[RMDB]
RNA sequence: GGGAACGACUCGAGUAGAGUCGAAAAAGAGACAAGCAGGCACAGGCUGCACACGUGCAGACGAAUAAUGAACUCUUGAGAAUUAGCACAAAAGAUUACGUGCAUUCUUUCGUGAUCCUCUGUAAUCCAACCAUUGCGAUUUCGAUCGCAAUGGUUGAAAAGAAACAACAACAACAAC
Reactivity to DMS in 0.01 (KOAc 150mM, MgCl2 10mM, bicine 150mM(pH8.5), 24C), signal-to-noise 2, nucleotides 027 to 126: a040g020a080g010a090c070a080a120g020c050a030g000g030c100a060c110a140g000g010c020u010g000c030a050c070a040c290g030u000g000c020a060g010a090c120g010a150a090u000a020a070u010g020a080a050c030u000c020u030u000g000a040g010a100a040u000u000a090g040c020a010c020a100a040a060a070g000a100u010u000a020c140g000u000g000c020a090u000u000c030u010u000u010c090g010u000g000a050u010c030c030u000c130u020g020u000a010a060u000c050
Reactivity to 2A3 in 0.01 (KOAc 150mM, MgCl2 10mM, bicine 150mM(pH8.5), 24C), signal-to-noise 2, nucleotides 027 to 126: a050g060a000g000a030c050a040a040g000c030a020g060g060c050a040c000a030g110g000c030u000g000c010a010c020a000c060g060u050g000c020a000g020a040c030g060a100a000u080a140a070u210g100a110a100c020u000c020u030u030g010a010g020a060a080u200u160a080g000c020a020c020a040a160a040a040g170a160u100u180a100c110g000u000g020c000a000u000u020c000u030u100u050c010g000u060g060a070u030c020c000u070c010u040g090u110a010a040u030c030

An RNA of 177 nucleotides, treated with DMS and 2A3 and read out base by base. Values cover nucleotides 27 to 126. For 2A3 the reverse transcriptase was SuperScript II with manganese. For DMS the reverse transcriptase was MarathonRT.